[RMDB]
RNA sequence: GGGAACGACUCGAGUAGAGUCGAAAAUGGAACAUGGUUCUGGCUUUCGUUAGGCUGGGCUGUUAGAUGCAAUAUUCUGGCCUGCCCACUCCAAGUUGAGAGUUGGACCGUGGGGCUUGGGCGAAGGCCCUUGUCUCUCGGCCCCUAAACUGGAGGGACACUAUACACGCUUCGGCGUGUAUAGUGUAAAAGAAACAACAACAACAAC
Reactivity to 2A3 in 0.01 (KOAc 150mM, MgCl2 10mM, bicine 150mM(pH8.5), 24C), signal-to-noise 2, nucleotides 027 to 156: u120g030g010a040a020c060a190u060g130g000u070u040c030u020g080g000c010u040u060u100c120g080u080u180a080g040g000c020u030g020g040g000c040u050g050u050u030a110g010a150u040g000c020a050a080u030a040u220u000c040u040g010g000c000c030u030g040c000c010c000a040c030u000c000c020a220a030g010u010u080g100a120g000a020g070u180u120g080g000a260c000c010g010u020g000g010g000g010c000u020u020g000g000g000c010g080a200a060g100g020c020c000c010u000u000g000u000c000u000c010u000c000g000g010c000c000c000c010u020a030a030a010c010u000g000g010a010g000g060g020